An RNA of 177 nucleotides, treated with DMS and read out base by base.
RNA sequence: GGGAACGACUCGAGUAGAGUCGAAAAAGUGACUGAGUACAAGGCCUCUGUGGACAUGCCUGCGCUUGACAUUAGGAAGAAGAUGGAAGAAACGGAAGUGAUGUACAAUGCACUUUCAGAGUUAUCAUGCUAGCCCAUGAUUCGUCAUGGGCUAGCAAAAAGAAACAACAACAACAAC
Reactivity to DMS in 0.01 (KOAc 150mM, MgCl2 10mM, bicine 150mM(pH8.5), 24C), signal-to-noise 2, nucleotides 027 to 126: a060g020u000g020a120c060u000g000a300g000u000a060c050a080a180g000g000c000c040u000c010u000g020u010g010g030a170c220a050u000g010c040c000u010g010c140g010c070u000u000g020a090c090a100u000u000a060g020g010a050a030g010a050a090g020a090u010g000g010a050a020g000a080a060a130c090g000g000a040a020g030u000g000a160u000g010u010a060c160a040a100u000g000c020a020c000u000u000u000c020a130g000a100g000u000u000a080u000c110a120

Reactivities are given for positions 27 through 126. For DMS, 937 sequencing reads were counted.